[RMDB]
RNA sequence: GGGAACGACUCGAGUAGAGUCGAAAAUGAUCGAGAGAUCUAAUUAUGUACGCGAGUCAAGUGCACAGACUCGAGCGAAAGCUCGGUCGAAAGACCGCGUACAUGAACCGGCAAGUGUACAGUCGAACACUGCAUAUUUAUUCGUAAAUAUGCAGUGAAAAGAAACAACAACAACAAC
Reactivity to 2A3 in 0.01 (KOAc 150mM, MgCl2 10mM, bicine 150mM(pH8.5), 24C), signal-to-noise 7, nucleotides 027 to 126: u110g000a000u010c010g000a000g000a010g000a110u000c000u020a060a070u080u170a010u030g000u000a000c000g010c000g010a020g010u010c030a200a150g030u010g040c020a010c010a030g000a000c010u010c070g000a000g000c010g060a130a010a000g000c000u000c010g000g000u000c000g000a040a020a000g010a000c000c000g000c000g000u000a000c000a000u000g000a010a040c070c000g000g000c040a200a160g000u010g000u040a020c020a010g020u010c020g020a050a020
Reactivity to DMS in 0.01 (KOAc 150mM, MgCl2 10mM, bicine 150mM(pH8.5), 24C), signal-to-noise 9, nucleotides 027 to 126: u000g010a010u000c000g010a280g000a250g010a000u000c000u000a070a100u000u000a020u000g000u000a000c000g020c000g010a030g000u000c010a040a070g020u000g010c030a020c040a300g000a010c000u000c010g010a010g020c000g010a130a100a180g010c000u000c000g010g000u000c000g000a100a080a140g000a010c000c000g020c000g010u000a000c000a000u000g010a080a100c220c020g010g000c030a040a070g010u000g010u000a020c020a300g010u000c020g010a130a260
Annotation:
Conditions: 150 mM KOAc, 10 mM MgCl2 and 150 mM bicine (pH 8.5), 24 C. Structure probing data (2A3 and DMS) for a 177-nucleotide construct. DMS (dimethyl sulfate) methylates the pairing face of unpaired adenines and cytosines. It was measured as part of the RMDB library OK2TRN. DMS adducts were read by reverse transcription with MarathonRT.